[RMDB]
RNA sequence: GGGAACGACUCGAGUAGAGUCGAAAAGUUUUACCAAACAGCCAAGAUGUUUAGUAGGCUAUACCAUUCUAGGUUUGUGCAAGUACACUGACUAUGAUGUUCACGCAAUGACAAAAUCACCUAAUGAUGGAUUUCUCAGAACAUAUCCCUGUCAUUAAAAUAAAUGGCUAUUCGUAGCCAUUUAUUUAAAAGAAACAACAACAACAAC
Reactivity to 2A3 in 0.01 (KOAc 150mM, MgCl2 10mM, bicine 150mM(pH8.5), 24C), signal-to-noise 4, nucleotides 027 to 156: g010u020u060u080u110a060c010c000a050a040a010c030a010g060c040c040a120a040g070a100u060g060u080u060u080a090g030u040a030g070g000c020u010a030u060a070c020c010a060u060u060c040u080a030g030g030u050u050u120g040u040g030c030a100a040g040u060a020c020a010c030u070g160a050c050u080a080u180g070a120u020g030u060u070c040a030c110g030c020a010a090u110g020a050c050a040a150a000a060u130c030a080c020c030u090a090a040u100g030a030u040g000g020a030u040u140u020c100u020c040a060g030a080a030c020a050u060a070u070c000c010c020u030g050u100c050a090u060u200a050
Reactivity to DMS in 0.01 (KOAc 150mM, MgCl2 10mM, bicine 150mM(pH8.5), 24C), signal-to-noise 4, nucleotides 027 to 156: g020u010u000u010u000a120c020c010a000a030a020c020a060g010c100c200a140a190g010a200u000g000u000u010u010a030g030u000a040g000g000c020u000a140u010a140c070c030a100u000u000c090u000a140g010g020u000u000u000g040u000g010c060a090a140g030u010a080c040a030c010u000g010a090c030u000a100u010g010a060u000g000u000u000c040a070c110g040c060a090a100u010g000a120c060a050a060a050a300u000c050a050c030c020u010a070a060u010g010a080u000g020g010a120u000u000u000c030u000c040a130g000a050a080c070a100u000a130u000c020c020c010u000g020u000c020a110u000u000a080